RNA sequence: GGGAACGACUCGAGUAGAGUCGAAAAGAUAUGGACAUGCUAGACGUCAACAGCUUAAUCGGAAACGAUUAAGACAUGACGCUAGACAUGUCCUAAGUCAAAAGUACGGAGCUUCGGCUCCGUACAACUAGGCUAUAAGCUUCGGCUUAUAGCCUAGAAAAGAAACAACAACAACAAC
Reactivity to 2A3 in 0.01 (KOAc 150mM, MgCl2 10mM, bicine 150mM(pH8.5), 24C), signal-to-noise 1, nucleotides 027 to 126: g000a020u090a070u160g000g000a000c000a000u010g000c000u030a040g070a300c020g010u000c020a060a070c100a230g010c000u020u000a010a000u000c010g030g030a080a070a060c020g020a010u000u000a000a000g050a050c000a000u070g000a000c010g000c000u000a000g000a010c000a000u010g000u010c000c000u000a020a010g020u020c040a000a000a020a270g010u000a000c000g000g000a020g030c020u080u190c300g150g000c000u000c000c020g010u000a000c000a000a010
Reactivity to DMS in 0.01 (KOAc 150mM, MgCl2 10mM, bicine 150mM(pH8.5), 24C), signal-to-noise 3, nucleotides 027 to 126: g000a110u000a300u000g000g000a010c000a010u010g030c010u000a000g000a230c000g050u010c020a010a140c300a160g000c010u010u000a000a000u000c000g000g000a220a110a210c010g020a020u010u000a010a010g000a010c090a260u000g010a010c000g020c020u000a020g010a120c000a000u000g010u000c010c000u000a020a110g000u010c040a080a110a070a180g020u000a000c000g000g000a030g000c000u000u000c280g050g020c010u000c010c000g030u000a000c020a010a080

Overview
The record gives the reactivity of an RNA of 177 nucleotides to 2A3 and DMS. Reactivities are rounded to 0.1 and cut off at 0 and 3. The data come from the RNA Mapping Database (RMDB), library TTRDES. For DMS, 1,961 sequencing reads were counted. For DMS the reverse transcriptase was MarathonRT.